[RMDB]
RNA sequence: GGGAACGACUCGAGUAGAGUCGAAAAAUGGCCAGAGAGCAGCCACGACCUGCCGGGAAGGUGUGGAGGGGCGAGGGUCUCUCUCAGGGCCACACACACGGUCCCUGCCCUGGUCUUUGCGGGCAGCCGCCAGCCCUGGCUGUGGUCUGAUGAGUCAAGCUAGUAUACAUUUCGAUGUAUACUAGCUAAAAGAAACAACAACAACAAC
Reactivity to DMS in 0.01 (KOAc 150mM, MgCl2 10mM, bicine 150mM(pH8.5), 24C), signal-to-noise 2, nucleotides 027 to 156: a040u010g000g040c020c030a180g000a110g010a120g030c050a090g020c020c000a060c040g030a030c030c020u010g010c060c030g000g000g000a210a120g020g010u010g030u000g000g000a090g010g010g040g040c030g010a120g010g020g040u000c030u000c000u000c030u000c080a130g010g030g010c000c020a040c070a100c110a170c170a070c090g040g000u010c000c020c010u010g020c020c040c010u020g030g010u000c140u020u000u000g050c170g020g000g000c020a040g010c000c030g020c020c050a140g020c050c000c000u000g000g000c000u000g020u000g010g000u000c010u010g010a130u000g020a210g000u000c010a120
Reactivity to 2A3 in 0.01 (KOAc 150mM, MgCl2 10mM, bicine 150mM(pH8.5), 24C), signal-to-noise 4, nucleotides 027 to 156: a000u070g030g000c020c020a020g080a020g010a010g120c050a010g020c020c010a050c040g050a090c010c020u040g040c020c010g000g010g040a030a130g040g010u070g060u140g040g020a060g010g000g010g040c050g030a150g080g120g050u030c020u000c000u010c000u020c040a040g020g020g020c000c000a010c000a000c000a000c000a020c050g030g030u030c020c010c000u000g000c000c000c010u100g090g040u120c080u130u110u210g090c060g000g000g000c010a010g020c020c010g010c020c020a020g020c020c000c030u050g030g000c040u080g030u050g060g020u050c030u020g080a150u060g020a040g070u080c080a060